[RMDB]
RNA sequence: GGGAACGACUCGAGUAGAGUCGAAAAGCGCGGAACCGCCCGACAUCGAAAGACCCACCGCCGCGUUGCCUGUCGGGGACACGCCCUUGUUGGCCUGUAGCCAGGCGGGCAUCUCUCUGGUAAGGAAAAUCAAGUGACAUUUCGAUGUCACUUGAUUAAAAGAAACAACAACAACAAC
Reactivity to DMS in 0.01 (KOAc 150mM, MgCl2 10mM, bicine 150mM(pH8.5), 24C), signal-to-noise 4, nucleotides 027 to 126: g020c050g010c050g000g000a100a070c060c080g000c030c020c040g020a040c060a040u020c050g000a060a080a080g010a080c090c020c020a100c050c070g010c010c020g010c030g010u000u010g000c000c000u010g030u000c000g000g030g030g010a040c060a050c300g000c000c010c020u000u010g020u030u030g020g010c000c030u000g010u010a090g000c050c020a050g000g010c010g010g010g010c010a030u000c040u000c030u010c030u000g000g020u020a110a090g000g010a040a110
Reactivity to 2A3 in 0.01 (KOAc 150mM, MgCl2 10mM, bicine 150mM(pH8.5), 24C), signal-to-noise 5, nucleotides 027 to 126: g020c010g000c010g010g040a040a060c040c020g030c010c000c000g060a040c000a070u090c040g100a090a060a030g070a060c000c010c000a010c010c010g000c000c000g020c010g040u030u020g020c000c000u020g010u030c010g010g020g040g040a000c020a000c030g020c000c000c010u110u280g060u080u130g090g010c000c030u060g030u060a040g180c010c000a020g010g000c000g000g010g000c010a020u020c050u010c010u000c020u060g060g000u090a070a070g120g000a090a130
Structure probing data (DMS and 2A3) for a 177-nucleotide construct. For 2A3 the reverse transcriptase was SuperScript II with manganese. The RNA was probed in 150 mM KOAc, 10 mM MgCl2 and 150 mM bicine (pH 8.5) at 24 C.